[RMDB]
RNA sequence: GGGAACGACUCGAGUAGAGUCGAAAAGCUAGUCGGAGACGACUAGCAACGAUCAGUUCGCUGAUCGGAACGUGCAUUCGAAUACGCUAGAAGCACGAAUAGGCGACGCAUAGCGUAGCACAGAGGAAGCUCAUGACAUGAAUAACAAGGCGUCGCGGGAUAUAAAUCCGUUCGCGGAUUUAUAUCCAAAAGAAACAACAACAACAAC
Reactivity to 2A3 in 0.01 (KOAc 150mM, MgCl2 10mM, bicine 150mM(pH8.5), 24C), signal-to-noise 4, nucleotides 027 to 156: g010c000u000a000g000u000c000g030g000a030g010a070c010g000a000c000u000a000g000c000a010a010c000g000a010u000c000a000g010u050u100c150g030c100u000g000a000u000c000g010g060a050a020c010g000u000g000c080a300u000u010c010g010a070a040u050a060c000g000c020u010a010g000a010a010g000c010a000c000g010a020a050u220a120g050g000c000g010a000c000g000c020a070u090a050g000c020g020u020a020g010c030a020c000a100g070a030g060g060a100a070g050c020u030c060a050u080g050a060c030a130u150g110a150a030u150a140a020c070a100a080g060g000c000g000u000c000g000c000g010
Reactivity to DMS in 0.01 (KOAc 150mM, MgCl2 10mM, bicine 150mM(pH8.5), 24C), signal-to-noise 2, nucleotides 027 to 156: g020c000u000a000g000u000c010g020g010a300g000a300c000g030a010c000u000a000g020c000a040a050c030g000a020u000c010a000g000u000u010c300g030c010u000g000a030u000c010g040g000a050a070c040g010u000g010c000a300u010u000c030g020a210a170u000a040c020g000c050u000a100g010a060a100g000c020a030c010g010a110a110u000a100g030g050c000g000a020c010g070c010a160u000a120g020c000g010u000a050g020c050a140c080a130g020a080g000g010a140a140g000c030u000c050a090u000g010a110c100a220u000g000a130a080u000a070a090c070a050a090g030g010c040g000u000c010g000c000g020